[RMDB]
RNA sequence: GGGAACGACUCGAGUAGAGUCGAAAAAUAAAGCGUAAUCGCAUCCCAGUAGCAAAGAGCAGCGUAAACGCGAAAGCCGAACUCAAGAUCGCAUCGGGCUAAGAUGCGAUCGUAGCCACGCAAAAAACUAGUUGCACUAGUUCGCUAGUGCAACUAGAAAAGAAACAACAACAACAAC
Reactivity to DMS in 0.01 (KOAc 150mM, MgCl2 10mM, bicine 150mM(pH8.5), 24C), signal-to-noise 3, nucleotides 027 to 126: a030u010a060a140a150g040c010g010u000a120a140u020c000g020c010a140u000c000c010c010a150g010u000a110g010c050a050a060a050g020a100g010c080a060g020c050g010u000a050a100a080c130g020c010g010a100a070a130g020c010c020g020a090a160c040u000c100a040a100g000a020u000c000g010c000a010u000c000g000g020g010c290u010a150a070g000a000u000g000c000g010a000u000c000g010u000a030g000c030c040a120c230g000c070a000a040a070a070a030a090
Reactivity to 2A3 in 0.01 (KOAc 150mM, MgCl2 10mM, bicine 150mM(pH8.5), 24C), signal-to-noise 1, nucleotides 027 to 126: a000u140a010a070a000g010c030g030u050a080a030u150c020g000c000a030u030c010c010c010a030g120u150a010g020c030a090a190a000g090a130g090c050a000g020c020g080u100a210a010a000c030g000c000g060a060a010a000g030c000c030g020a040a000c030u010c070a110a070g000a010u040c000g000c000a000u000c020g030g070g050c020u060a080a000g010a000u000g000c000g000a000u010c010g000u000a000g000c030c010a020c070g000c000a000a050a000a100a000a050